[RMDB]
RNA sequence: GGGAACGACUCGAGUAGAGUCGAAAAUACGAAGUAUUAAUGUUUUGAAUGACAAGCGAGAAUUUCUCGGGUUGGUUGAUGAAUGAUGUAGCGUAUUUAAUAGUCGUUGCGAUGUGUGCCUUAGUUAUAACACUAGGGCUACGGAAAUAACUAAGGGGUAGAUACAGAAGUUCGCUUCUGUAUCUACAAAAGAAACAACAACAACAAC
Reactivity to 2A3 in 0.01 (KOAc 150mM, MgCl2 10mM, bicine 150mM(pH8.5), 24C), signal-to-noise 4, nucleotides 027 to 156: u170a030c030g030a040a010g050u100a120u190u120a100a110u060g040u050u120u120u130g080a090a100u120g030a040c030a070a030g010c030g000a020g030a140a200u070u190u100c000u020c000g030g000g000u020u050g070g010u040u030g010a090u040g050a050a090u070g050a020u060g020u050a010g020c000g000u030a050u010u160u050a130a120u050a050g060u020c050g000u010u020g000c020g030a060u070g040u020g020u020g050c000c000u000u000a000g010u010u110a210u080a240a060c070a010c020u010a010g000g000g000c000u000a000c000g000g020a030a090a050u080a050a020c060u080a030a080g070g000g010
Reactivity to DMS in 0.01 (KOAc 150mM, MgCl2 10mM, bicine 150mM(pH8.5), 24C), signal-to-noise 2, nucleotides 027 to 156: u000a070c030g000a130a130g010u000a070u010u020a090a110u010g010u010u000u000u010g010a110a090u000g000a080c030a040a100g020c030g010a090g010a130a180u000u020u010c000u000c020g030g000g050u000u010g000g000u010u010g000a130u000g020a080a100u000g020a040u000g020u010a090g010c030g030u000a080u010u000u010a080a120u000a100g020u000c010g010u000u000g020c020g000a120u010g030u000g010u000g030c000c000u000u000a020g010u000u010a070u010a080a120c090a040c010u000a030g010g010g010c010u000a010c030g050g000a070a090a080u000a030a090c030u000a030a060g000g000g030